[RMDB]
RNA sequence: GGGAACGACUCGAGUAGAGUCGAAAAGUCGGCGAGUCCUUCUUCGUGAGCGGCAAGCGGCCUGCGGACCUGGGCUACGUGCGACGCCUGGGGUACCAGCUGGGGUAUAAGCUGGCUAUCCGCUGGGUGCUGCGCGACCCGAUUUACGGCCGCAUGGCCCGCCAAAUUGAUUCGUCAAUUUGGCGGGAAAAGAAACAACAACAACAAC
Reactivity to DMS in 0.01 (KOAc 150mM, MgCl2 10mM, bicine 150mM(pH8.5), 24C), signal-to-noise 1, nucleotides 027 to 156: g060u010c040g020g040c010g010a100g000u000c010c040u010u010c040u010u000c120g050u020g000a080g020c070g020g000c030a100a080g020c080g010g020c000c000u010g060c010g000g010a020c010c020u010g010g010g020c010u010a040c040g000u000g010c020g040a040c040g040c010c030u000g020g010g010g040u010a030c030c000a040g010c010u000g000g010g020g010u020a090u000a050a090g030c000u010g000g010c150u020a080u000c010c000g010c000u000g010g000g060u000g010c000u000g000c000g000c000g010a160c000c000c000g010a230u010u020u030a050c030g020g010c010c010g050c030a050u000g000g020
Reactivity to 2A3 in 0.01 (KOAc 150mM, MgCl2 10mM, bicine 150mM(pH8.5), 24C), signal-to-noise 3, nucleotides 027 to 156: g070u070c030g050g010c010g010a020g040u010c010c020u030u060c020u070u070c110g060u090g060a040g040c060g020g000c030a050a020g040c010g000g000c000c010u000g020c040g020g010a150c000c030u060g000g000g000c060u130a050c020g050u020g000c000g020a030c010g010c000c010u000g000g000g020g000u010a010c000c000a010g000c000u030g010g000g070g010u200a090u020a100a010g000c000u000g000g020c020u060a070u150c000c000g040c140u050g000g000g000u040g000c040u040g010c020g000c000g240a300c000c000c000g030a020u100u110u170a100c050g010g000c000c000g000c000a020u030g030g020